[RMDB]
RNA sequence: GGGAACGACUCGAGUAGAGUCGAAAAAGCCAAUCCUUCGGGAUUGGCUACAGCAACGAAGCAAAGCAACGAGACAAGACGAGCAAAAGAUCCAGCAUGCUACACACCCCAUCUUCGGAUGGGGUAAUUAUGUUCCAGAGUUCGCUCUGGAACAUAAAAAAGAAACAACAACAACAAC
Reactivity to DMS in 0.01 (KOAc 150mM, MgCl2 10mM, bicine 150mM(pH8.5), 24C), signal-to-noise 2, nucleotides 027 to 126: a050g040c000c010a000a010u000c000c000u000u000c180g030g000g000a030u000u000g000g020c000u000a000c040a100g020c080a060a050c050g030a080a110g010c020a040a050a090g010c000a050a050c050g000a100g000a070c040a030a080g020a040c180g000a050g010c070a010a060a070a040g000a080u000c050c020a060g000c080a040u010g000c090u000a050c130a080c180a050c030c010c010c000a010u000c000u010u020c180g010g000a010u000g020g000g000g000u000a000a010